This 177-nucleotide RNA was probed chemically with 2A3 and DMS. It was measured as part of the RMDB library M2PK50. For 2A3 the reverse transcriptase was SuperScript II with manganese.
RNA sequence: GGGAACGACUCGAGUAGAGUCGAAAAGGAGUACUCUUCGGAGUACUCCAGCUUCCGAGAAUCUUCCUCGGUAUAUAAAAGAAACCCUUGGAAACAAGGGAAAUACGGCAGGGUUCGCCCUGCCGAACGAUAGUACAAGCUUCGGCUUGUACUAUCGAAAAGAAACAACAACAACAAC
Reactivity to 2A3 in 0.01 (KOAc 150mM, MgCl2 10mM, bicine 150mM(pH8.5), 24C), signal-to-noise 3, nucleotides 027 to 126: g000g000a000g040u060a000c010u010c030u080u120c300g020g010a000g000u000a000c000u000c000c000a000g010c000u090u020c000c000g010a010g010a040a140u100c120u170u100c080c010u010c000g000g060u040a080u020a020u020a210a090a010a030g070a090a100a070c000c000c000u000u010g030g010a040a040a030c000a000a010g010g000g000a000a030a010u020a000c010g000g000c010a010g030g020g020u030u110c170g120c000c000c000u010g000c000c010g000a010a000
Reactivity to DMS in 0.01 (KOAc 150mM, MgCl2 10mM, bicine 150mM(pH8.5), 24C), signal-to-noise 3, nucleotides 027 to 126: g010g000a020g010u000a000c000u000c010u000u030c200g030g010a030g010u000a000c000u000c000c000a010g000c120u000u000c000c010g010a020g010a190a120u000c130u010u010c090c000u000c010g020g020u000a060u000a050u010a040a080a080a070g010a140a100a120c000c000c000u000u000g000g000a120a090a200c000a010a010g000g000g000a000a030a070u000a070c010g000g020c000a010g000g010g010u000u010c250g020c000c000c000u000g000c010c000g010a010a050